The data come from the RNA Mapping Database (RMDB), library OK2TST. An RNA of 177 nucleotides, treated with 2A3 and DMS and read out base by base. Conditions: 150 mM KOAc, 10 mM MgCl2 and 150 mM bicine (pH 8.5), 24 C.
RNA sequence: GGGAACGACUCGAGUAGAGUCGAAAAAAGAGAUUGAUGAAUCAUUGCCUGUGACUAAAGUUGACGGUGAUCAUGUCAUUACCGAACGCUAUAUGGAAAAUGUGAUCGCACCUCCAUUUUGGCAAAACACGGUGAGUACUUUCGAGUACUCACCGUGAAAAGAAACAACAACAACAAC
Reactivity to 2A3 in 0.01 (KOAc 150mM, MgCl2 10mM, bicine 150mM(pH8.5), 24C), signal-to-noise 2, nucleotides 027 to 126: a000a000g110a000g010a040u060u200g010a050u050g050a100a040u010c010a040u090u050g030c000c000u070g030u060g050a050c030u150a120a050a100g000u040u040g060a020c030g030g050u010g020a010u010c020a130u140g180u110c040a020u000u070a000c010c010g050a010a000c040g060c080u060a040u000a010u170g020g070a060a060a040a030u150g020u040g030a130u070c130g000c130a040c010c000u000c000c000a000u130u020u070u010g020g030c000a000a050a000a000
Reactivity to DMS in 0.01 (KOAc 150mM, MgCl2 10mM, bicine 150mM(pH8.5), 24C), signal-to-noise 2, nucleotides 027 to 126: a100a080g000a130g000a060u000u000g000a060u030g000a080a080u000c060a110u000u000g040c010c010u020g000u000g020a120c130u030a060a110a050g020u000u000g030a300c050g000g020u010g010a060u000c090a070u000g030u000c120a030u000u000a060c010c010g000a060a110c210g010c030u000a030u000a010u000g020g000a070a060a020a080u000g000u000g000a050u010c180g000c050a050c110c100u000c020c020a050u000u000u000u000g060g010c060a060a020a040a110